[RMDB]
RNA sequence: GGGAACGACUCGAGUAGAGUCGAAAAGAUGGCUAUAGAAGAGCUUUGUGCUCUUGGCCAGAGCUCAUCUAACGGAGUGGAGCAUAAAAGCAGUGUAGUAAUGCCCAGAGCAUGCUGCUUGGUGUCCCCUUAGUUUUAAUUUCGAUUAAAACUAAGGAAAAGAAACAACAACAACAAC
Reactivity to 2A3 in 0.01 (KOAc 150mM, MgCl2 10mM, bicine 150mM(pH8.5), 24C), signal-to-noise 5, nucleotides 027 to 126: g060a070u080g020g000c030u060a030u100a300g140a170a010g010a010g010c000u100u150u230g130u210g020c000u010c000u060u100g020g000c000c000a000g010a000g000c020u020c030a060u020c040u070a090a060c100g090g000a060g130u130g030g040a050g030c020a030u110a060a220a000a010g000c010a010g010u030g010u190a190g080u100a110a050u060g010c030c020c050a030g010a020g040c010a010u040g000c010u010g000c000u020u020g070g010u040g040u030c020c000
Reactivity to DMS in 0.01 (KOAc 150mM, MgCl2 10mM, bicine 150mM(pH8.5), 24C), signal-to-noise 9, nucleotides 027 to 126: g010a110u000g010g010c020u000a150u010a110g010a050a030g010a010g010c000u000u010u010g020u020g020c000u000c090u000u000g010g010c020c030a030g000a080g010c010u000c020a060u000c050u010a090a170c190g000g010a080g010u000g000g010a110g010c040a070u000a060a090a040a030g000c010a020g010u000g020u000a080g010u010a100a070u000g010c010c020c110a140g000a130g010c050a040u000g000c010u000g000c010u010u000g000g020u000g000u000c030c040